RNA sequence: GGGAACGACUCGAGUAGAGUCGAAAACGCCAUGUCAAAGGUCCGCAAAGACAUCCAAGAGUGGAAACCAUCAACUGGAUGGUAUGAUUGGCAGCAGGUUCCAUUCUGCUCAAACCACUUCACUGAAUUGAUCAUGAAAGAUGGAAGAACAUUGGUGGUGUAAGCUCCAAUUCGUUGGAGCUUACACAAAAGAAACAACAACAACAAC
Reactivity to 2A3 in 0.01 (KOAc 150mM, MgCl2 10mM, bicine 150mM(pH8.5), 24C), signal-to-noise 4, nucleotides 027 to 156: c020g010c000c000a010u060g030u050c080a140a010a050g070g010u030c030c000g030c070a050a080a030g030a020c020a040u040c030c030a110a010g050a010g040u030g020g040a070a100a050c030c010a010u030c010a010a300c140u150g140g020a020u010g010g010u060a110u090g170a120u060u100g080g000c040a000g000c010a010g000g090u170u110c050c000a030u100u000c020u010g020c010u020c060a060a090a050c010c000a010c000u070u020c060a060c090u060g020a080a100u190u110g030a060u140c050a080u100g080a080a040a060g110a020u030g000g020a030a030g010a130a020c040a090u090u130g000g020u050g030
Reactivity to DMS in 0.01 (KOAc 150mM, MgCl2 10mM, bicine 150mM(pH8.5), 24C), signal-to-noise 1, nucleotides 027 to 156: c010g000c020c000a100u000g000u020c040a040a130a100g030g010u000c010c000g000c100a110a090a180g010a110c060a090u000c020c080a080a160g000a150g010u000g020g010a120a150a050c000c000a050u000c030a100a090c100u000g010g020a050u000g010g000u000a040u000g000a090u010u010g040g010c040a060g010c040a020g000g000u010u030c070c050a080u000u000c000u000g000c000u000c050a100a030a150c000c010a100c030u000u010c000a080c080u030g010a120a140u000u010g020a070u000c020a080u000g000a110a060a090g010a130u000g030g010a070a240g010a030a050c080a040u000u010g050g000u000g000